[RMDB]
RNA sequence: GGGAACGACUCGAGUAGAGUCGAAAACUGUGAAGGCUACCUUCCCGAGGCGUCGUAACCCGGCGUCUCACUCUGGCACGGGCCGGUCUUGGCGGGUUCACGCUCGCCUUGUGCCGCGUCCCACAAAUUGCCAACUCAGAACUGCUUACGGCGGGGAGAAUGGGUGAAAGUUCGCUUUCACCCAUUCAAAAGAAACAACAACAACAAC
Reactivity to 2A3 in 0.01 (KOAc 150mM, MgCl2 10mM, bicine 150mM(pH8.5), 24C), signal-to-noise 1, nucleotides 027 to 156: c050u090g010u040g130a050a050g050g020c020u040a120c020c020u030u010c000c040c040g000a000g000g000c010g000u040c000g020u060a090a120c000c030c000g000g020c020g000u010c010u000c000a010c000u160c030u050g000g030c010a070c080g000g000g000c000c000g000g000u010c020u010u000g010g000c000g010g010g000u130u190c100a070c160g000c000u010c000g000c050c000u010u000g020u050g010c000c000g010c050g030u210c020c000c000a040c030a000a110a050u200u080g010c000c000a020a060c060u050c040a010g000a080a020c010u020g000c040u160u250a040c110g030g030c000g000g010g000g030a060